An RNA of 177 nucleotides, treated with DMS and read out base by base.

RNA sequence: GGGAACGACUCGAGUAGAGUCGAAAAUCGAUGUUGAACUCGAAGUUGGCGAGCAAGUUCGUAUUAAAUCAGGUCCAUUUGCGAAUCAAGUUGGUGAAGUUCAAGAAAUUGAAACAGAUAAGUUUAAUAUACUCCCCGGUUUCGACCGGGGAGUAUAAAAAGAAACAACAACAACAAC
Reactivity to DMS in 0.01 (KOAc 150mM, MgCl2 10mM, bicine 150mM(pH8.5), 24C), signal-to-noise 2, nucleotides 027 to 126: u020c030g010a060u030g030u000u010g050a040a100c020u000c010g000a130a080g000u020u000g000g000c130g060a140g020c080a080a120g070u000u000c030g010u000a230u050u030a040a090a210u040c010a040g000g000u010c030c000a050u090u010u010g000c070g000a070a100u000c100a080a070g020u010u000g000g000u060g000a020a120g010u010u000c000a000a010g000a020a050a060u020u000g000a110a100a020c070a080g000a110u000a010a120g010u010u040u000a060a060

Record summary: The RNA was probed in 150 mM KOAc, 10 mM MgCl2 and 150 mM bicine (pH 8.5) at 24 C. Reactivities are given for positions 27 through 126. For DMS the reverse transcriptase was MarathonRT.